[RMDB]
RNA sequence: GGGAACGACUCGAGUAGAGUCGAAAAACUGCGUUGCUUGUUAUGCCAGUAUGCUUCCUGGCCAGUUUGCUUAUUGCCACUUUUUUGCUUAAGGAAUCGCAUCCUGCGCGCAGAGAUUAAUAACAGAAUUUACUCGACCUUUCGAGGUCGAGUAAAUAAAAGAAACAACAACAACAAC
Reactivity to DMS in 0.01 (KOAc 150mM, MgCl2 10mM, bicine 150mM(pH8.5), 24C), signal-to-noise 1, nucleotides 027 to 126: a120c000u000g000c070g030u000u010g020c060u000u000g010u000u000a070u010g000c040c080a000g020u010a060u000g000c080u010u010c050c010u000g000g000c010c300a070g000u000u020u000g010c000u020u010a040u000u000g000c010c230a090c120u000u000u020u000u020u000g010c030u000u000a050a030g000g010a040a030u000c190g000c060a070u000c040c020u000g000c060g020c050g010c040a100g000a120g000a140u000u000a060a030u000a050a070c120a100g000a100